This 207-nucleotide RNA was probed chemically with 2A3. Conditions: 150 mM KOAc, 10 mM MgCl2 and 150 mM bicine (pH 8.5), 24 C. For 2A3 the reverse transcriptase was SuperScript II with manganese. Source: RMDB library M2RFPK, as collected in RNAgym.
[RMDB]
RNA sequence: GGGAACGACUCGAGUAGAGUCGAAAAUACCGCAGGCCUGCGGUGCGGCAGAGUGGAGACCUGCCGUAAGCCGUGUUGUUUUGACAACCGGGAGAAAGCGUAUGCGGAGGCAGCGCUUUCAGGGUCUAAAAGUAUGGGAUCUUCGGAUCCCAUACAACCUGGCUUUAUACUUCGGUAUAAAGCCAGGAAAAGAAACAACAACAACAAC
Reactivity to 2A3 in 0.01 (KOAc 150mM, MgCl2 10mM, bicine 150mM(pH8.5), 24C), signal-to-noise 1, nucleotides 027 to 156: u080a020c000c000g000c000a010g000g000c000c010u000g010c020g000g000u000g000c000g000g030c050a010g080a080g000u130g010g150a040g040a070c000c000u000g010c000c000g000u010a010a020g000c000c010g100u110g000u130u010g020u000u120u070u300g120a040c000a000a020c000c000g000g010g000a000g000a010a000a000g010c010g000u040a300u190g020c020g060g100a050g060g190c000a010g000c010g000c000u020u000u000c000a010g000g000g000u010c000u000a000a040a040a040g000u000a000u000g000g010g010a020u010c000u030u000c190g090g010a000u000c010c000c000a000u000a000c000a000a000